[RMDB]
RNA sequence: GGGAACGACUCGAGUAGAGUCGAAAAUCGCGGGCAGCGGGUGUAUCGGUCGCUGCGGCUCAAGGAUGAGUGGCGGCCGUAUUCGUUCGCCGAUCACGCUGCUCAGCAAAGUCCGUCUCAUGUCCCCUCUGAGCGGGAGUGAUGGGGACAUGUGGGGCUCUGUAGCGUAGUUCGCUACGCUACAGAGAAAAGAAACAACAACAACAAC
Reactivity to 2A3 in 0.01 (KOAc 150mM, MgCl2 10mM, bicine 150mM(pH8.5), 24C), signal-to-noise 3, nucleotides 027 to 156: u160c060g010c020g000g010g000c000a000g010c010g040g100g040u150g040u090a040u040c000g000g030u080c030g010c020u030g000c000g050g000c040u050c090a120a140g160g060a220u180g040a070g080u080g060g020c050g020g010c000c000g000u010a040u040u150c050g030u040u120c080g020c080c000g020a020u030c020a010c030g000c010u020g000c000u010c030a010g000c010a010a090a020g040u030c010c010g100u030c030u000c040a010u000g000u010c000c000c000c000u010c030u060g100a120g050c080g050g050g000a030g040u090g010a110u140g000g000g000g000a000c000a000u000g030u040g000g010g000g000
Source information
Source: RMDB library OK3TST, as collected in RNAgym. Structure probing data (2A3) for a 207-nucleotide construct. Values cover nucleotides 27 to 156. The reactions ran in a buffer of 150 mM KOAc, 10 mM MgCl2 and 150 mM bicine (pH 8.5), at 24 C. 2A3 adducts were read by reverse transcription with SuperScript II with manganese.